[RMDB]
RNA sequence: GGGAACGACUCGAGUAGAGUCGAAAAGAGACAGAUGUUUGGAGGGAUUCGGAGACUGGAGGAGCCGACGGCAUGAAUGCAGGAAAUGAAGGCUCAGAGCGAGUCUCUCUGCUCCUCCUCCCUGCAGGGUACACCCUCAAUUCGUUGAGGGUGUACCAAAAGAAACAACAACAACAAC
Reactivity to 2A3 in 0.01 (KOAc 150mM, MgCl2 10mM, bicine 150mM(pH8.5), 24C), signal-to-noise 2, nucleotides 027 to 126: g030a000g020a010c020a040g200a160u100g090u130u090u110g080g020a010g010g010g000a060u120u070c060g040g000a040g020a020c050u050g060g040a030g060g020a000g050c010c040g060a040c030g000g010c030a020u160g230a300a050u150g050c010a000g060g070a110a120a080u190g020a090a000g010g000c000u000c000a050g030a020g160c050g030a000g040u000c010u000c000u000c000u030g020c010u030c000c000u030c000c010u020c030c000c000u010g040c030a040g010
Reactivity to DMS in 0.01 (KOAc 150mM, MgCl2 10mM, bicine 150mM(pH8.5), 24C), signal-to-noise 3, nucleotides 027 to 126: g000a100g000a110c060a070g000a100u010g010u000u010u010g020g000a070g010g000g000a110u000u000c170g000g020a060g000a080c080u010g020g020a190g020g010a070g010c020c050g020a140c100g010g020c030a080u010g020a130a070u010g020c020a040g010g000a040a070a140u000g000a090a230g010g000c020u000c000a060g000a120g030c070g000a020g000u000c010u000c040u000c050u010g000c080u000c010c000u000c010c010u010c030c020c010u000g000c040a180g000

Source: RMDB library OK2TRN, as collected in RNAgym. The record gives the reactivity of an RNA of 177 nucleotides to 2A3 and DMS. 2A3 adducts were read by reverse transcription with SuperScript II with manganese. The reactions ran in a buffer of 150 mM KOAc, 10 mM MgCl2 and 150 mM bicine (pH 8.5), at 24 C.